[RMDB]
RNA sequence: GGGAACGACUCGAGUAGAGUCGAAAAUUGCAAGCCUUCGGGCUUGCAAGGUGUCGGAUUGCGGAAUAUAUAAUCCUCCGCUUAAGGAUUAUACCGACUUAAGUGCCAGGCUGUUCGCAGCCUGGAAGUGGUCUAUUAGGUUCGCCUAAUAGACCACAAAAGAAACAACAACAACAAC
Reactivity to 2A3 in 0.01 (KOAc 150mM, MgCl2 10mM, bicine 150mM(pH8.5), 24C), signal-to-noise 3, nucleotides 027 to 126: u020u020g000c010a030a010g020c000c000u070u110c230g090g000g000c030u010u000g020c000a000a000g060g060u060g000u020c020g020g010a110u000u190g080c050g030g100a090a020u220a010u030a000u050a210a070u060c000c000u020c030c030g060c030u030u100a050a020g010g030a000u100u050a040u090a120c000c020g020a000c000u070u120a180a070g090u100g160c000c010a000g000g000c010u030g020u060u060c240g020c100a000g000c000c000u000g000g000a000a020
Reactivity to DMS in 0.01 (KOAc 150mM, MgCl2 10mM, bicine 150mM(pH8.5), 24C), signal-to-noise 3, nucleotides 027 to 126: u000u000g000c000a010a000g010c000c000u000u010c210g040g020g020c010u000u000g000c000a000a000g010g010u000g020u000c020g010g010a180u000u010g000c060g020g010a110a090u000a170u000a030u000a050a040u000c060c040u000c150c200g000c110u000u000a090a080g010g020a050u000u000a030u000a150c020c000g000a030c010u000u010a050a090g020u010g000c000c000a010g000g000c000u000g000u000u010c180g010c010a010g000c000c000u010g000g000a010a040
An RNA of 177 nucleotides, treated with 2A3 and DMS and read out base by base. For DMS the reverse transcriptase was MarathonRT. The reactions ran in a buffer of 150 mM KOAc, 10 mM MgCl2 and 150 mM bicine (pH 8.5), at 24 C. For 2A3, 2,245 sequencing reads were counted. It was measured as part of the RMDB library M2PK50. Values cover nucleotides 27 to 126.